Conditions: 150 mM KOAc, 10 mM MgCl2 and 150 mM bicine (pH 8.5), 24 C. Structure probing data (DMS and 2A3) for a 170-nucleotide construct. It was measured as part of the RMDB library 15KLIB. 2A3 adducts were read by reverse transcription with SuperScript II with manganese.
RNA sequence: GGGAACGACUCGAGUAGAGUCGAAAAUCAUGCUGUAUUAGACACACUACUUGCUUCUUCUAGUCUUAGAACCUUUGUUGUAGAUAAGUCUUUGUCAAUUGAGGAGUUUGCUGACGUAGUAAAGGAAUAAGAUAGCCGUUCGCGGCUAUCAAAAGAAACAACAACAACAAC
Reactivity to DMS in 0.01 (KOAc 150mM, MgCl2 10mM, bicine 150mM(pH8.5), 24C), signal-to-noise 5, nucleotides 027 to 129: u060c000a140u060g030c090u050g060u050a000u040u010a080g000a020c210a030c050a140c000u030a030c130u030u010g020c080u050u010c060u020u010c040u020a100g010u040c080u060u020a090g040a100a080c090c030u010u070u000g060u040u020g020u030a060g030a180u030a040a120g020u020c120u000u040u030g010u030c130a080a090u030u080g010a130g020g040a080g020u010u020u010g020c170u000g030a060c120g040u000a090g030u000a050a050a080g000g030a020a030u020a120a090
Reactivity to 2A3 in 0.01 (KOAc 150mM, MgCl2 10mM, bicine 150mM(pH8.5), 24C), signal-to-noise 3, nucleotides 027 to 129: u160c020a020u110g050c060u050g050u150a130u070u090a060g050a020c030a000c000a000c080u080a070c030u040u050g010c000u030u060c000u060u000c010u090a020g050u020c000u060u010a040g010a070a070c000c000u020u080u040g100u090u050g010u030a000g020a130u030a080a040g040u000c000u010u030u030g030u010c020a060a070u010u190g030a050g030g030a030g020u050u100u020g040c000u000g020a030c040g050u010a020g000u060a080a060a060g060g030a020a100u090a120a070